[RMDB]
RNA sequence: GGGAACGACUCGAGUAGAGUCGAAAACACCAACCGCUCCACCACAGAGAGCCAGCUGUGACACUCGUGGAGCCGUCACCCCAUACCCGAACAACUAUGGAACCUGCGAGUGCAAGAGCCAAGUCAAGCCUCGACUAUUAUUCGUAAUAGUCGAGGCAAAAGAAACAACAACAACAAC
Reactivity to DMS in 0.01 (KOAc 150mM, MgCl2 10mM, bicine 150mM(pH8.5), 24C), signal-to-noise 1, nucleotides 027 to 126: c080a150c110c040a110a070c090c190g030c000u000c020c030a030c030c080a000c120a040g000a120g030a090g030c080c080a030g000c040u000g010u000g050a100c100a060c100u000c070g000u010g020g000a030g000c000c040g000u000c140a080c030c030c000c060a110u020a080c020c000c010g000a030a080c030a130a050c010u000a060u000g000g000a150a060c090c000u010g000c020g030a100g000u020g000c080a060a070g040a080g010c010c010a040a080g010u010c060a090a140
About this RNA: This 177-nucleotide RNA was probed chemically with DMS. For DMS the reverse transcriptase was MarathonRT.